[RMDB]
RNA sequence: GGGAACGACUCGAGUAGAGUCGAAAACUGUCGUGGAUGGAAGUACAGCCGUACUUCAUCCUCUACGGCUGUAGAGGCAUCCACAUCGUGGAGCGAUGUGAUGGCACUACUCGCGUAGUGCAUGUCUGACGCGAGUCAGACCAUCACGACAGACACGCGAUGCAACUUAGUUCGCUAAGUUGCAUCGAAAAGAAACAACAACAACAAC
Reactivity to 2A3 in 0.01 (KOAc 150mM, MgCl2 10mM, bicine 150mM(pH8.5), 24C), signal-to-noise 3, nucleotides 027 to 156: c000u000g010u000c000g000u020g130g090a010u000g000g020a020a000g020u000a000c040a070g150c100c130g020u000a000c000u020u030c010a050u000c000c010u010c000u010a020c010g270g010c180u160g000u000a000g000a000g020g000c010a000u010c060c030a010c000a000u000c010g000u060g150g170a140g130c020g000a000u000g000u000g000a000u000g000g000c030a010c030u020a000c000u020c110g100c080g000u010a010g010u000g000c020a010u020g000u000c000u010g020a010c000g000c050g030a010g000u000c000a000g000a010c010c000a000u000c000a000c000g000a000c000a000g020a010c080a010c050g040
Reactivity to DMS in 0.01 (KOAc 150mM, MgCl2 10mM, bicine 150mM(pH8.5), 24C), signal-to-noise 2, nucleotides 027 to 156: c030u030g020u000c010g040u010g000g040a000u020g010g000a130a070g050u000a030c010a170g000c140c160g060u000a010c020u010u010c020a050u000c050c020u020c010u000a000c000g040g040c130u010g030u000a010g000a120g040g010c070a040u000c020c020a010c000a000u000c000g070u010g000g020a280g010c020g000a030u010g020u000g030a210u010g010g010c000a060c000u010a000c000u000c200g020c300g000u010a030g010u000g000c020a000u000g000u000c040u010g000a020c000g010c300g000a200g010u000c030a030g010a040c020c020a000u000c000a000c000g020a050c020a080g010a160c080a030c070g000
Chemical mapping of a 207-nucleotide RNA with 2A3 and DMS. For 2A3 the reverse transcriptase was SuperScript II with manganese. DMS adducts were read by reverse transcription with MarathonRT. Conditions: 150 mM KOAc, 10 mM MgCl2 and 150 mM bicine (pH 8.5), 24 C. For DMS, 3,457 sequencing reads were counted. Source: RMDB library OK3TST, as collected in RNAgym. For 2A3, 3,374 sequencing reads were counted.